Description:
An RNA of 177 nucleotides, treated with DMS and 2A3 and read out base by base. For DMS the reverse transcriptase was MarathonRT. Values cover nucleotides 27 to 126. Values are in units of 0.01, from 0 to 300, in steps of 10. Source: RMDB library TTRDEL, as collected in RNAgym.
RNA sequence: GGGAACGACUCGAGUAGAGUCGAAAAGAUAUGGACGGGAUAUAUCAAGCUAUCGGAAACGAUAGGCUGACCACGUAUUCGUCCUAAGUCAAACCAACUUGUACUACUUCGGUAGUACAAGUUGGAAGUGGAUUCUGAUGUUCGCAUCAGAAUCCACAAAAGAAACAACAACAACAAC
Reactivity to DMS in 0.01 (KOAc 150mM, MgCl2 10mM, bicine 150mM(pH8.5), 24C), signal-to-noise 1, nucleotides 027 to 126: g000a020u000a230u050g010g010a020c000g000g000g010a010u000a020u010a090u020c080a050a060g010c000u000a010u000c000g010g000a160a090a180c000g000a020u000a010g020g040c010u010g000a060c300c300a100c160g010u000a010u000u010c000g020u000c000c000u010a040a100g000u000c040a040a090a200c000c000a000a010c000u000u000g060u000a000c010u000a000c000u000u000c180g000g000u000a020g000u000a000c000a000a030g010u000u000g000g010a010a020
Reactivity to 2A3 in 0.01 (KOAc 150mM, MgCl2 10mM, bicine 150mM(pH8.5), 24C), signal-to-noise 1, nucleotides 027 to 126: g010a020u030a050u140g020g010a030c080g100g110g060a000u030a000u000a020u160c050a040a000g020c000u010a010u000c000g030g000a070a020a070c020g000a010u010a060g260g110c020u020g060a070c010c080a210c170g000u000a000u000u050c020g010u000c000c000u040a150a010g100u040c030a050a000a140c010c000a000a000c030u000u000g020u010a020c000u000a000c000u070u060c170g140g000u020a010g020u020a000c000a020a000g020u000u000g000g020a000a040